Notes:
The data come from the RNA Mapping Database (RMDB), library VIROID. An RNA of 207 nucleotides, treated with DMS and 2A3 and read out base by base.
[RMDB]
RNA sequence: GGGAACGACUCGAGUAGAGUCGAAAACCAGCUGAAACAGGGUUUUCACCCUUCCUUUCUUCUGGUUUCCUUCCUCUGCUUCAGCGGCCUCGCCCGGAACCUCUUGACCAGCGCAGGUGCUGACGCGACCGGUGGCAUCACCGAGUUGCUCCCGAGACAUACUGCUAUAGUUCGCUAUAGCAGUAUGAAAAGAAACAACAACAACAAC
Reactivity to DMS in 0.01 (KOAc 150mM, MgCl2 10mM, bicine 150mM(pH8.5), 24C), signal-to-noise 2, nucleotides 027 to 156: c020c010a070g030c020u010g010a010a010a010c060a040g030g040g020u000u000u000u010c220a140c050c010c000u000u000c090c020u000u000u000c010u000u010c020u010g020g010u000u000u000c030c020u010u000c090c020u000c060u000g040c030u000u000c020a110g030c050g010g020c020c020u000c040g000c020c020c010g020g000a140a160c110c070u000c120u000u010g020a300c060c050a140g030c070g070c060a080g010g030u010g000c020u000g000a050c040g020c010g000a060c030c020g000g040u000g010g000c070a150u010c000a050c020c000g000a040g020u000u000g020c010u000c000c000c000g000a220g020a300
Reactivity to 2A3 in 0.01 (KOAc 150mM, MgCl2 10mM, bicine 150mM(pH8.5), 24C), signal-to-noise 9, nucleotides 027 to 156: c000c000a000g000c010u010g000a010a030a070c300a300g040g050g020u170u170u300u300c210a070c010c000c010u010u020c000c000u000u010u000c000u010u000c000u000g010g000u000u020u030c010c020u060u100c020c010u050c090u170g000c010u020u010c000a000g000c010g140g020c000c000u020c010g010c020c060c060g060g040a190a180c070c090u210c110u290u270g090a100c000c030a010g010c010g010c090a010g000g020u020g000c000u010g000a010c010g000c000g030a050c050c080g070g020u070g070g000c070a190u050c010a080c010c010g010a010g010u000u010g000c010u000c000c000c000g010a030g000a010

The RNA was probed in 150 mM KOAc, 10 mM MgCl2 and 150 mM bicine (pH 8.5) at 24 C. Reactivities are given for positions 27 through 156.